Chemical mapping of a 170-nucleotide RNA with 2A3 and DMS.
For DMS the reverse transcriptase was MarathonRT.
It was measured as part of the RMDB library 15KLIB.
For 2A3 the reverse transcriptase was SuperScript II with manganese.
For DMS, 20,091 sequencing reads were counted.
RNA sequence: GGGAACGACUCGAGUAGAGUCGAAAACCAUUACGGUACCUGAAGAGUUCGCAAGUCAUGUUGCCAACUUCCAAAAAUCAGGUUAUAGUAAAUAUGUCACUGUUCAGGGACCACCUGGCACUGGCAAACGGUGCGAAGUUCGCUUCGCACAAAAGAAACAACAACAACAAC
Reactivity to 2A3 in 0.01 (KOAc 150mM, MgCl2 10mM, bicine 150mM(pH8.5), 24C), signal-to-noise 9, nucleotides 027 to 129: c000c000a000u010u080a010c030g020g030u030a000c000c000u000g010a050a010g000a020g040u010u020c020g000c000a010a020g040u270c070a090u260g110u110u000g010c010c010a000a000c010u120u090c060c050a040a110a040a030a130u020c000a000g030g000u020u060a070u020a030g060u040a010a030a090u250a080u080g010u010c000a000c020u020g040u300u300c030a000g040g070g230a300c090c030a120c070c000u010g000g010c000a000c010u000g020g000c030a090a030a010c100g050
Reactivity to DMS in 0.01 (KOAc 150mM, MgCl2 10mM, bicine 150mM(pH8.5), 24C), signal-to-noise 5, nucleotides 027 to 129: c020c010a170u040u040a000c000g040g050u050a020c000c000u000g000a030a080g010a050g030u010u010c290g030c030a000a000g050u100c270a000u110g040u020u040g000c020c040a020a040c020u020u070c160c140a020a050a030a060a010u040c000a020g010g020u020u040a060u000a090g000u020a010a060a090u030a000u020g030u000c020a020c080u010g030u060u110c040a040g040g000g090a220c140c110a130c010c040u030g000g000c010a010c000u010g000g010c000a030a080a100c050g000